Chemical mapping of a 177-nucleotide RNA with 2A3 and DMS.
Values cover nucleotides 27 to 126.

[RMDB]
RNA sequence: GGGAACGACUCGAGUAGAGUCGAAAAAUGAAGUUGACGCUGAUCCCCCUCCUGAGUACCGCGUUGGCAAAGUCAGCGGCGCGUUGCUGCGAACCGGGGUGUUUGGAGAUAAACAGGUCGUCGGUGAACGUCAUGCAAUCUUCGGAUUGCAUGACGUAAAAGAAACAACAACAACAAC
Reactivity to 2A3 in 0.01 (KOAc 150mM, MgCl2 10mM, bicine 150mM(pH8.5), 24C), signal-to-noise 2, nucleotides 027 to 126: a050u200g030a050a040g090u190u210g020a000c000g000c040u080g030a080u050c020c000c000c000c000u030c000c040u010g050a000g030u050a060c000c000g120c040g010u080u180g160g030c120a130a040a110g300u200c090a030g050c000g020g020c000g000c000g070u110u010g030c020u000g040c010g040a030a000c100c040g040g000g040g000u020g000u030u160u140g000g030a030g060a110u120a090a030a000c000a010g080g070u090c070g000u040c030g030g040u070g020a100
Reactivity to DMS in 0.01 (KOAc 150mM, MgCl2 10mM, bicine 150mM(pH8.5), 24C), signal-to-noise 2, nucleotides 027 to 126: a160u040g020a080a110g040u000u000g000a050c080g000c030u010g010a110u000c020c010c000c020c070u000c070c080u010g040a040g000u000a020c030c040g010c030g040u000u020g010g020c020a100a080a060g000u070c140a110g010c020g000g000c000g010c080g000u050u000g010c010u020g000c100g000a020a060c050c030g000g010g000g010u020g050u010u000u000g010g000a240g030a180u000a000a030a100c080a100g000g010u000c000g030u000c040g010g000u000g000a170

The 2A3 profile rests on 658 reads. The reactions ran in a buffer of 150 mM KOAc, 10 mM MgCl2 and 150 mM bicine (pH 8.5), at 24 C.